[RMDB]
RNA sequence: GGGAACGACUCGAGUAGAGUCGAAAAUUACGGAAAAAAUUAGGGGGAGAUAAGGAGUCAGAAGAUGCUCUGCGACUUCGUCGGAAAUUACAAGGAUCGCUAAACAAAUUGUCUAUCGCAAAUAUUUCUUCAAUUAUUAAGGAGAUUGAAGUCCUUACGUACUACCAGCAUUCGUGCUGGUAGUACGAAAAGAAACAACAACAACAAC
Reactivity to 2A3 in 0.01 (KOAc 150mM, MgCl2 10mM, bicine 150mM(pH8.5), 24C), signal-to-noise 1, nucleotides 027 to 156: u030u030a080c110g000g080a040a030a030a030a090a170u300u270a290g020g000g000g000g030a090g020a020u080a050a060g000g000a010g010u020c040a020g030a040a030g000a000u030g010c000u000c000u100g020c000g020a020c000u030u020c020g030u030c050g030g000a040a050a050u090u040a070c060a020a000g120g000a040u130c000g050c120u120a140a200a040c050a020a060a080u130u130g040u000c040u060a120u080c000g000c050a000a070a070u090a150u120u100u060c010u010u020c000a050a070u100u100a100u020u090a130a030g050g000a020g000a010u020u170g060a060a000g010u020c010c000u020u040a010
Background: Structure probing data (2A3) for a 207-nucleotide construct. 2A3 adducts were read by reverse transcription with SuperScript II with manganese.